[RMDB]
About this RNA
Chemical mapping of a 207-nucleotide RNA with 2A3. The reactions ran in a buffer of 150 mM KOAc, 10 mM MgCl2 and 150 mM bicine (pH 8.5), at 24 C. 2A3 is a SHAPE reagent: it acylates the 2'-hydroxyl of flexible nucleotides of all four kinds. 2A3 adducts were read by reverse transcription with SuperScript II with manganese. Reactivities are given for positions 27 through 156.

RNA sequence: GGGAACGACUCGAGUAGAGUCGAAAAGGUCUGAUUGUGGGAUGGCCUGAGGCUGGGAUCUACUGCGUAGCGGACCAGCUCAUGUUGACGGAACGUCCGCACUAAGCUUGCCAUCAAUAUGGGUGCCAUGGAGGAGUCCGUGGCAUUCAGGUUGGCUCAUUAUGCGCAUCUUCGGAUGCGCAUAAUGAAAAGAAACAACAACAACAAC
Reactivity to 2A3 in 0.01 (KOAc 150mM, MgCl2 10mM, bicine 150mM(pH8.5), 24C), signal-to-noise 1, nucleotides 027 to 156: g030g030u070c070u040g100a180u160u100g030u220g000g000g090a010u100g040g060c000c050u000g000a010g070g000c010u010g040g000g060a070u010c000u120a050c060u060g110c100g120u120a000g000c030g000g040a030c030c030a000g000c030u070c070a060u100g080u130u090g010a040c050g030g090a120a010c010g040u000c000c000g000c010a070c080u030a140a000g080c040u070u030g000c020c010a020u070c020a040a110u180a080u170g000g000g000u010g000c000c000a000u000g000g000a010g000g020a020g060u000c000c030g000u000g000g000c000a000u000u010c000a000g000g000u030u040g000g000c050u030